[RMDB]
RNA sequence: GGGAACGACUCGAGUAGAGUCGAAAAUGAUUGUGGGAAUCUCAGCUGCCAAGUUAGUGUUUUAGAGAUCCUGCACUCGAUAUUAGUUGUGGUAAACAGCUGAGGGAACAAUUCUGGGAUAAGUAAAGAUAAAUGCCGUGUUCGCACGGCAUUUAUCAAAAGAAACAACAACAACAAC
Reactivity to DMS in 0.01 (KOAc 150mM, MgCl2 10mM, bicine 150mM(pH8.5), 24C), signal-to-noise 2, nucleotides 027 to 126: u050g000a020u000u000g080u010g010g000g000a100a040u020c000u010c000a080g000c030u020g050c030c120a110a080g020u060u000a040g000u000g010u030u010u010u000a070g000a000g010a080u020c010c000u010g030c060a060c010u020c000g000a090u050a020u010u000a080g000u000u000g000u020g020g030u000a040a060a070c020a000g000c020u000g000a060g020g000g010a160a090c180a060a090u030u000c100u020g000g000g000a120u030a010a060g000u000a020a050a090
Reactivity to 2A3 in 0.01 (KOAc 150mM, MgCl2 10mM, bicine 150mM(pH8.5), 24C), signal-to-noise 2, nucleotides 027 to 126: u150g030a020u000u000g000u100g030g120g050a090a070u020c000u000c000a000g000c000u090g110c100c010a010a030g030u050u110a000g080u080g070u000u020u090u160a070g030a090g000a070u000c000c040u070g170c060a010c020u000c020g140a000u030a080u060u140a130g000u000u080g030u020g140g000u120a200a120a000c020a000g000c000u020g000a010g000g000g010a000a050c090a070a080u070u080c190u120g130g040g150a050u140a120a100g100u100a130a050a000